[RMDB]
RNA sequence: GGGAACGACUCGAGUAGAGUCGAAAAGAUCAAUUAUGAUUGCAAUGUACUAUGUCAAGGCAGACAUAUCUAGCUGUCGCCUUAGCUAGAGAUAGCCGAUUUAUUGCUUUCAUAAGAACGGCAAGAAGACGAUGCUCGUAUUCGUACGAGCAUCGUCAAAAGAAACAACAACAACAAC
Reactivity to DMS in 0.01 (KOAc 150mM, MgCl2 10mM, bicine 150mM(pH8.5), 24C), signal-to-noise 1, nucleotides 027 to 126: g000a090u040c040a140a170u000u020a040u010g000a020u000u000g010c000a000a270u010g010u000a050c080u000a050u010g000u000c030a120a040g030g030c010a020g010a010c100a080u000a010u000c020u000a010g030c050u010g000u000c180g000c110c050u000u000a100g000c030u000a030g000a010g040a090u000a040g030c070c070g030a100u010u000u020a050u000u000g020c000u000u000u000c000a000u030a000a030g020a060a080c210g030g000c040a070a080g000a110a110
Reactivity to 2A3 in 0.01 (KOAc 150mM, MgCl2 10mM, bicine 150mM(pH8.5), 24C), signal-to-noise 1, nucleotides 027 to 126: g030a110u150c040a050a070u000u010a000u060g010a000u010u060g000c030a030a000u020g010u050a070c040u130a080u140g110u090c040a100a170g000g000c040a030g060a020c000a050u170a060u030c040u040a000g080c000u020g160u150c120g150c100c010u030u020a010g030c010u000a030g000a000g000a010u010a010g050c040c030g060a000u220u030u000a010u020u020g000c000u030u000u020c000a000u020a020a020g010a020a040c040g050g080c020a020a050g020a090a010